Structure probing data (DMS) for a 177-nucleotide construct. It was measured as part of the RMDB library OK2TST. For DMS the reverse transcriptase was MarathonRT.

[RMDB]
RNA sequence: GGGAACGACUCGAGUAGAGUCGAAAACAUACUGUGUACCAUUGUGAGAAAUACCAGAACAUCGAGGUUCAGAAAUGAAUGGCUCCCGUGGUCGUCGUCAACAACCUGCCCCCUCCCGGAACAGUGGAUCACCAAGGGUGUUCGCACCCUUGGUGAUAAAAGAAACAACAACAACAAC
Reactivity to DMS in 0.01 (KOAc 150mM, MgCl2 10mM, bicine 150mM(pH8.5), 24C), signal-to-noise 1, nucleotides 027 to 126: c080a170u020a160c130u000g010u040g020u000a150c060c030a030u020u010g020u010g000a090g010a090a090a070u010a120c070c050a160g000a070a090c100a130u000c080g000a090g010g020u000u000c030a040g000a080a170a060u000g010a050a030u010g010g010c030u000c030c080c140g000u010g000g020u000c020g000u010c040g030u000c060a020a020c110a040a020c050c030u000g010c000c000c010c000c000u000c000c000c020g000g000a030a010c010a070g020u010g030g020